[RMDB]
RNA sequence: GGGAACGACUCGAGUAGAGUCGAAAAAAAUACCUUUCUCAAUGUAGGGAAUAACAUUGAAUUGAUACAAAUACCUUUUUCGGUGUAGGGAAAAACACCGAAUUGAUACAAAUACCUUUCUCAAUGUCGUUAAUAGACGAUUCGUCGUCUAUUAACGAAAAGAAACAACAACAACAAC
Reactivity to 2A3 in 0.01 (KOAc 150mM, MgCl2 10mM, bicine 150mM(pH8.5), 24C), signal-to-noise 9, nucleotides 027 to 126: a000a000a000u240a010c000c000u000u000u000c000u000c000a000a010u000g000u000a010g020g050g110a300a090u210a110a000c000a000u000u010g020a020a070u090u160g070a050u080a150c090a050a160a050u180a080c010c000u030u020u000u000u000c000g000g000u010g000u010a020g030g030g100a090a210a090a000a020c000a000c000c000g000a010a000u000u010g000a000u020a020c030a020a110a040u130a090c010c030u030u090u050c030u040c040a080a160u130g080u060
Reactivity to DMS in 0.01 (KOAc 150mM, MgCl2 10mM, bicine 150mM(pH8.5), 24C), signal-to-noise 2, nucleotides 027 to 126: a030a040a110u100a100c020c020u000u000u000c030u000c000a010a000u000g040u000a040g020g020g000a110a000u010a040a020c000a000u010u000g000a020a150u050u020g010a130u050a080c210a030a100a090u050a060c000c000u000u000u000u000u000c020g000g000u000g040u000a050g010g010g000a090a020a060a020a020c020a000c000c000g010a080a000u020u000g010a090u010a040c140a100a060a090u000a030c190c060u000u000u000c030u020c100a070a110u030g010u010
About this RNA:
Chemical mapping of a 177-nucleotide RNA with 2A3 and DMS. It was measured as part of the RMDB libraries RFM100 and RFMREP.